Source: RMDB library RFMREP, as collected in RNAgym. This 177-nucleotide RNA was probed chemically with DMS and 2A3. As a SHAPE reagent, 2A3 marks flexible, mostly unpaired nucleotides at the ribose 2'-OH. The RNA was probed in 150 mM KOAc, 10 mM MgCl2 and 150 mM bicine (pH 8.5) at 24 C. For 2A3, 1,004 sequencing reads were counted. Values cover nucleotides 27 to 126.

RNA sequence: GGGAACGACUCGAGUAGAGUCGAAAACGGUUGGGAUUGCGUUCUGUAAUGGACGCAUGAACCAGGAAUUCCUAGUAGUCGCGUGUCACUAACGGGCGACGACUGCGUCCCUGUUCUUUGUACACACCAACCUAAGAUCCUUCGGGAUCUUAGGUUGAAAAGAAACAACAACAACAAC
Reactivity to DMS in 0.01 (KOAc 150mM, MgCl2 10mM, bicine 150mM(pH8.5), 24C), signal-to-noise 2, nucleotides 027 to 126: c100g000g030u000u020g020g020g010a090u000u000g010c000g010u000u000c000u000g000u030a110a070u030g000g000a010c010g010c000a010u000g010a240a130c000c010a100g010g010a070a170u000u000c030c010u000a080g010u000a070g020u000c060g010c030g010u010g020u000c040a050c110u010a070a080c130g020g020g010c100g000a040c010g000a120c120u000g000c050g010u000c000c000c020u010g000u000u000c080u000u000u010g010u030a050c110a070c150a100c120
Reactivity to 2A3 in 0.01 (KOAc 150mM, MgCl2 10mM, bicine 150mM(pH8.5), 24C), signal-to-noise 1, nucleotides 027 to 126: c070g110g000u060u020g090g010g030a030u000u010g000c020g000u000u000c000u030g180u110a140a160u300g000g000a000c000g060c000a000u020g010a000a090c010c000a000g020g200a030a060u020u000c010c020u020a030g000u020a000g000u030c030g030c110g210u050g030u060c000a050c150u080a140a030c070g010g050g060c110g010a060c020g030a030c030u100g000c000g020u020c010c000c000u010g060u000u040c110u010u130u080g110u200a040c050a000c000a030c010